[RMDB]
RNA sequence: GGGAACGACUCGAGUAGAGUCGAAAAGGUAGCGAUCGUAACGAUACAAUUAUGAAUAUCGUUAAACAUAUUGAAUCAACAAAUGGUAUUAACGAUGACGAUGUCAUUGUGACACAUGAUGCAGUUAGGAUGUACACCGGUUCGCCGGUGUACAUCCAAAAGAAACAACAACAACAAC
Reactivity to DMS in 0.01 (KOAc 150mM, MgCl2 10mM, bicine 150mM(pH8.5), 24C), signal-to-noise 1, nucleotides 027 to 126: g000g010u010a030g000c100g000a110u000c210g080u000a100a070c000g000a000u000a000c070a090a070u020u000a130u000g000a120a120u000a000u000c030g020u000u000a000a020a150c140a000u020a090u000u000g000a110a010u150c140a170a120c130a100a000a020u000g000g000u020a110u000u000a050a090c000g000a000u000g000a000c080g000a160u170g030u000c140a020u030u020g000u000g000a030c150a110c000a110u000g000a070u100g000c010a040g030u040u000a080
Reactivity to 2A3 in 0.01 (KOAc 150mM, MgCl2 10mM, bicine 150mM(pH8.5), 24C), signal-to-noise 3, nucleotides 027 to 126: g150g030u060a000g020c010g140a130u040c000g080u090a000a120c010g000a050u030a010c060a110a110u300u070a140u180g070a160a090u100a040u120c000g000u000u000a060a130a000c070a000u040a300u020u130g080a110a090u290c030a090a240c000a000a090a000u040g040g000u050a090u110u010a060a000c000g000a000u050g030a070c060g120a040u110g000u000c030a000u060u100g030u080g060a000c010a000c000a050u130g000a000u070g000c000a010g070u040u040a000
An RNA of 177 nucleotides, treated with DMS and 2A3 and read out base by base. 2A3 adducts were read by reverse transcription with SuperScript II with manganese. Conditions: 150 mM KOAc, 10 mM MgCl2 and 150 mM bicine (pH 8.5), 24 C. It was measured as part of the RMDB library OK1LIB.